[RMDB]
Chemical mapping of a 177-nucleotide RNA with DMS. The reactions ran in a buffer of 150 mM KOAc, 10 mM MgCl2 and 150 mM bicine (pH 8.5), at 24 C.

RNA sequence: GGGAACGACUCGAGUAGAGUCGAAAAGUUAGAGGGGUUGAGGCAAAAAGGGUGGUCAAUAUUAAAUUACUUGAUGAUCGAGAGAGAGUCUCGUGUAAGAAACUCCAUGGUAAAAAUUUUAGCCCAACCGUAGAAAUCUAUUCGUAGAUUUCUACGGAAAAGAAACAACAACAACAAC
Reactivity to DMS in 0.01 (KOAc 150mM, MgCl2 10mM, bicine 150mM(pH8.5), 24C), signal-to-noise 1, nucleotides 027 to 126: g000u000u000a030g010a080g000g000g000g040u010u020g000a040g020g000c100a060a030a060a120a030g000g030g040u010g000g010u000c050a050a020u010a070u000u000a130a050a170u000u010a010c100u000u000g050a040u010g000a110u000c040g010a080g000a090g000a240g000a140g000u010c000u020c040g020u000g010u000a080a130g000a180a080a130c080u000c040c020a080u010g020g030u000a040a050a100a120a100u040u010u030u010a160g010c080c050c030a180a110
DMS adducts were read by reverse transcription with MarathonRT. It was measured as part of the RMDB library OK2TST.